[RMDB]
RNA sequence: GGGAACGACUCGAGUAGAGUCGAAAACUCACUCACUACGGUGAGUGAGAAUCUUAAGGCUCAAUAAAGCUUGCCUUGAGGUCCCUCAAGCAGAUAUAGACUGAAACAUUUAGUAAACGCAAGCAGGGAGCAACGGCUCGAGUACGCUCGAGCCGAAGUACUAUGCACGUUUCGACGUGCAUAGUACAAAAGAAACAACAACAACAAC
Reactivity to 2A3 in 0.01 (KOAc 150mM, MgCl2 10mM, bicine 150mM(pH8.5), 24C), signal-to-noise 2, nucleotides 027 to 156: c000u000c000a000c000u000c000a000c000u020a030c260g130g000u000g000a000g000u000g000a000g000a000a010u040c020u000u090a040a010g030g010c010u010c040a120a080u130a300a130a020g040c060u050u020g000c020c000u000u000g000a000g000g030u050c130c000c000u030c060a060a050g000c010a020g050a060u040a070u090a100g150a160c100u060g010a060a180a050c040a050u110u120u090a040g040u070a090a060a010c050g010c030a020a000g000c010a020g040g130g000a030g000c010a050a130c010g000g020c000u000c000g000a000g000u030a030c160g020c130u000c000g000a000g000c000c000g000a000a000
The record gives the reactivity of an RNA of 207 nucleotides to 2A3.
It was measured as part of the RMDB library OK3TST.
The reactions ran in a buffer of 150 mM KOAc, 10 mM MgCl2 and 150 mM bicine (pH 8.5), at 24 C.
For 2A3 the reverse transcriptase was SuperScript II with manganese.